[RMDB]
RNA sequence: GGGAACGACUCGAGUAGAGUCGAAAAAGUCAAGGAUGCAGGGAAGCUAACUCUAGGACAGCCGCUAACUGUCCUGACCUCCCACCCAGUUGAGGCACUUGUCCGACAGCCUCCAAAUAAAUGGCUCCGUCGAUUAUGACUUCGGUCAUAAUCGACGAAAAGAAACAACAACAACAAC
Reactivity to 2A3 in 0.01 (KOAc 150mM, MgCl2 10mM, bicine 150mM(pH8.5), 24C), signal-to-noise 3, nucleotides 027 to 126: a000g070u080c050a030a110g040g010a100u200g070c000a050g030g000g030a070a040g010c030u040a090a030c070u060c100u190a030g000g070a020c010a000g000c010c010g100c150u120a150a130c020u040g010u000c000c000u030g010a050c000c020u000c020c010c000a040c000c040c000a040g050u140u160g050a050g000g020c040a010c130u100u080g080u070c030c010g090a050c030a010g010c000c000u010c010c010a050a110a000u300a020a100a020u080g000g000c040u020c010
Reactivity to DMS in 0.01 (KOAc 150mM, MgCl2 10mM, bicine 150mM(pH8.5), 24C), signal-to-noise 1, nucleotides 027 to 126: a070g000u000c050a060a130g040g010a120u050g000c020a010g000g000g000a050a100g000c080u000a150a120c110u010c090u030a000g030g000a000c000a000g010c050c010g000c130u050a060a150c000u000g030u000c000c000u000g000a050c090c060u010c000c000c000a190c080c080c000a060g020u020u050g010a010g010g060c050a050c070u020u000g000u000c130c000g000a040c040a050g000c000c050u020c000c060a060a070a070u080a020a210a100u050g000g000c050u000c060

This 177-nucleotide RNA was probed chemically with 2A3 and DMS. Conditions: 150 mM KOAc, 10 mM MgCl2 and 150 mM bicine (pH 8.5), 24 C. For DMS the reverse transcriptase was MarathonRT. It was measured as part of the RMDB library OK1LIB. For 2A3, 1,255 sequencing reads were counted. 2A3 is a SHAPE reagent: it acylates the 2'-hydroxyl of flexible nucleotides of all four kinds.